[RMDB]
RNA sequence: GGGAACGACUCGAGUAGAGUCGAAAAGUACGUACACUCGGAUCGGUACGUACGAUCCAUGUCUAGUCGAGUGUACGACUGACGAUCAUCUGCAGCUAUCAUGCUAGGGAUCGUACACUCGAUCUGGUAGAGGGGGAGUUUUCGAACUCCCCCUCUAAAAAGAAACAACAACAACAAC
Reactivity to 2A3 in 0.01 (KOAc 150mM, MgCl2 10mM, bicine 150mM(pH8.5), 24C), signal-to-noise 2, nucleotides 027 to 126: g000u010a000c020g030u020a000c120a030c080u160c120g100g220a300u150c180g060g030u010a000c020g010u020a000c000g000a000u000c000c000a070u140g060u040c020u110a030g020u020c000g000a000g040u010g000u000a010c010g020a000c020u020g020a080c090g040a120u070c000a050u000c110u170g040c020a010g000c030u110a120u300c030a060u180g000c000u050a110g060g000g030a100u050c000g020u010a000c000a000c000u020c000g040a100u060c000u020g000g020
Reactivity to DMS in 0.01 (KOAc 150mM, MgCl2 10mM, bicine 150mM(pH8.5), 24C), signal-to-noise 2, nucleotides 027 to 126: g010u000a010c000g000u000a010c010a100c090u020c100g010g000a090u020c200g010g000u000a020c050g010u010a000c000g000a100u000c010c030a120u020g020u000c050u010a060g000u000c000g020a030g000u000g010u010a010c000g000a040c070u020g000a180c120g000a090u010c110a110u010c080u010g000c120a000g000c140u000a120u010c220a080u020g020c000u010a090g020g030g020a130u000c000g010u000a010c020a010c000u000c030g000a020u020c030u000g030g020